[RMDB]
Source: RMDB library OK2TST, as collected in RNAgym. An RNA of 177 nucleotides, treated with 2A3 and DMS and read out base by base. For 2A3, 792 sequencing reads were counted. For DMS the reverse transcriptase was MarathonRT. 2A3 adducts were read by reverse transcription with SuperScript II with manganese.
RNA sequence: GGGAACGACUCGAGUAGAGUCGAAAAUUACAGCAAUGAACCAUGAGAUUCAAAUACUGCUUUUUACUAAGUACUUACAGACUAAUGACAUAGGAGACCUCAUAGGCACCUGGCUGUUUUUAACCAGGAGAUUUCCAUGAUUCGUCAUGGAAAUCUCAAAAGAAACAACAACAACAAC
Reactivity to 2A3 in 0.01 (KOAc 150mM, MgCl2 10mM, bicine 150mM(pH8.5), 24C), signal-to-noise 1, nucleotides 027 to 126: u050u000a020c020a000g000c010a000a170u070g000a000a040c000c000a030u040g050a010g000a140u060u000c010a070a000a100u060a110c040u000g130c030u160u040u080u150u000a120c070u090a200a000g050u000a110c050u070u060a030c040a040g050a010c030u060a050a050u050g040a040c020a050u120a000g000g040a040g030a030c000c030u000c030a040u120a210g020g030c030a070c030c000u000g090g010c010u000g000u050u000u020u000u100a030a040c000c000a010g110
Reactivity to DMS in 0.01 (KOAc 150mM, MgCl2 10mM, bicine 150mM(pH8.5), 24C), signal-to-noise 1, nucleotides 027 to 126: u000u000a030c040a050g000c030a010a160u000g020a190a130c030c000a130u000g000a070g000a110u000u010c030a060a160a150u020a070c080u010g020c080u000u000u040u000u000a070c040u010a050a130g000u000a040c150u000u000a150c110a100g000a050c210u000a030a010u000g020a030c100a070u000a060g020g000a170g000a110c140c040u000c010a010u000a150g010g010c090a020c200c080u000g010g010c020u020g010u000u000u000u000u000a030a230c020c000a070g020